RNA sequence: GGGAACGACUCGAGUAGAGUCGAAAAGAUAUGGAGGUUCUGCAGAGCAAUGAUGUCGGAAACGAUUGAGCUCAUGCAGAGACCUCCUAAGUCAAAAGUACGUACGUUGUUCGCAACGUACGUACAACACUCAAGGGCUGUUCGCAGCCCUUGAGUGAAAAGAAACAACAACAACAAC
Reactivity to 2A3 in 0.01 (KOAc 150mM, MgCl2 10mM, bicine 150mM(pH8.5), 24C), signal-to-noise 1, nucleotides 027 to 126: g060a030u050a120u210g010g000a020g000g000u040u040c010u000g060c000a000g000a000g010c000a030a300u280g040a060u110g060u010c000g050g060a030a020a110c010g000a010u040u040g000a010g000c030u000c060a220u070g000c000a010g000a000g030a000c000c000u000c000c000u000a120a030g050u030c000a000a010a080a070g000u010a020c000g000u010a000c000g000u000u030g060u050u080c210g000c200a000a000c000g000u000a000c010g000u000a000c010a000a000
Reactivity to DMS in 0.01 (KOAc 150mM, MgCl2 10mM, bicine 150mM(pH8.5), 24C), signal-to-noise 2, nucleotides 027 to 126: g000a060u000a300u000g000g030a000g080g010u000u000c000u000g000c000a040g010a000g000c000a100a170u000g010a070u010g000u010c000g000g010a110a140a180c000g000a020u000u000g010a160g020c010u010c000a040u000g050c000a000g010a030g000a030c000c000u000c000c000u010a060a040g010u000c010a080a060a130a170g000u020a010c000g000u000a000c000g010u000u000g000u000u020c260g020c000a020a000c000g010u020a000c000g000u000a000c020a110a110